An RNA of 207 nucleotides, treated with 2A3 and read out base by base.
RNA sequence: GGGAACGACUCGAGUAGAGUCGAAAAAGAUCCACUCUACGGCGUGGAUCACACGUUCAUCCCUAUUGGGACGGAAGUAGGCAUAGUGCCGAAGGAACGCAUUAGUCAUGCGCUACGGCGCAUGACACACAUCAGAGUCACUUCGGUGACUCUGAAAGAUUGGCUAGGAGUUCGCUCCUAGCCAAUCAAAAGAAACAACAACAACAAC
Reactivity to 2A3 in 0.01 (KOAc 150mM, MgCl2 10mM, bicine 150mM(pH8.5), 24C), signal-to-noise 2, nucleotides 027 to 156: a000g000a000u000c000c000a010c010u060c000u100a090c250g140g000c030g060u020g030g000a000u020c000a000c000a000c010g030u000u000c000a020u030c010c000c000u100a280u150u300g000g010g000a000c020g020g010a050a000g010u000a000g000g000c010a080u090a300g080u180g180c010c000g000a000a000g040g020a000a010c020g020c050a060u130u100a080g000u000c000a000u010g010c010g020c010u020a030c260g040g000c020g000c000a000u020g000a000c000a000c000a000c000a020u070c000a000g000a000g000u000c000a000c020u060u080c140g080g000u000g010a000c000u010c000u000g000a000a000a000

The 2A3 profile rests on 888 reads.